[RMDB]
RNA sequence: GGGAACGACUCGAGUAGAGUCGAAAAAAAUAUGAUAAUAAAGGCCAAGCACAGUGGCUCAUGUCUGUAAUUCCAGCAUUUUGGGAAGCAGAGGCAGGCAGAUCGUUUGAGUCGAGUUUGAGACCAGUGGUGUAUGAGAGUUCGCUCUCAUACACCAAAAAGAAACAACAACAACAAC
Reactivity to DMS in 0.01 (KOAc 150mM, MgCl2 10mM, bicine 150mM(pH8.5), 24C), signal-to-noise 1, nucleotides 027 to 126: a030a070a090u010a020u010g000a210u010a110a080u000a160a060a130g000g030c010c010a080a080g020c010a060c140a120g000u000g020g000c000u000c050a050u030g030u020c000u030g020u000a040a140u000u000c020c000a040g000c190a100u000u000u000u000g040g000g010a040a130g030c100a050g010a090g010g040c040a090g010g010c010a030g000a050u000c090g020u000u010u000g010a120g000u000c020g000a120g020u000u000u020g010a090g020a290c060c060a070g020